[RMDB]
RNA sequence: GGGAACGACUCGAGUAGAGUCGAAAAUGAGUAGUUCAGAAAGAAUCGAGCUUUCGAUUGAUCCGGGUACUUGGAAUCCUAUGGAUGAAGACAUGGUCUCUGCGGAUCCCAUUAAAUUUCAUUCGAAGGAGGAACCUUAUAAAAACCGUAUUGACUCCACUUACUCUGUGUUCGCACAGAGUAAGUGAAAAGAAACAACAACAACAAC
Reactivity to DMS in 0.01 (KOAc 150mM, MgCl2 10mM, bicine 150mM(pH8.5), 24C), signal-to-noise 1, nucleotides 027 to 156: u020g000a060g010u000a090g000u020u000c020a050g030a150a060a220g040a100a100u020c020g010a100g000c160u000u000u010c010g010a090u000u000g000a290u010c010c010g030g050g030u000a010c030u000u050g010g010a140a130u020c020c000u000a130u010g040g020a080u020g000a020a090g030a060c170a050u000g000g020u000c050u010c010u000g000c290g040g020a090u010c070c000c040a010u000u000a030a090a140u000u000u000c090a040u040u000c020g030a150a090g030g010a090g030g000a100a170c020c020u000u010a190u010a040a040a060a030a070c060c040g000u000a070u000u000g000a130c030u000c000
Reactivity to 2A3 in 0.01 (KOAc 150mM, MgCl2 10mM, bicine 150mM(pH8.5), 24C), signal-to-noise 3, nucleotides 027 to 156: u070g010a010g030u060a000g020u090u160c090a060g060a070a120a020g050a010a110u070c050g030a040g150c130u150u180u060c010g050a050u020u090g020a030u020c030c010g000g060g000u060a060c080u050u110g040g010a070a030u010c000c000u050a110u240g010g000a010u010g010a030a010g020a010c010a060u030g010g000u000c020u000c030u070g070c110g060g010a020u020c040c000c030a030u020u110a060a130a080u030u040u010c010a000u020u020c020g030a050a010g020g050a030g010g030a080a080c000c010u100u130a160u110a120a110a060a050a020c030c000g020u040a100u060u110g030a040c000u010c010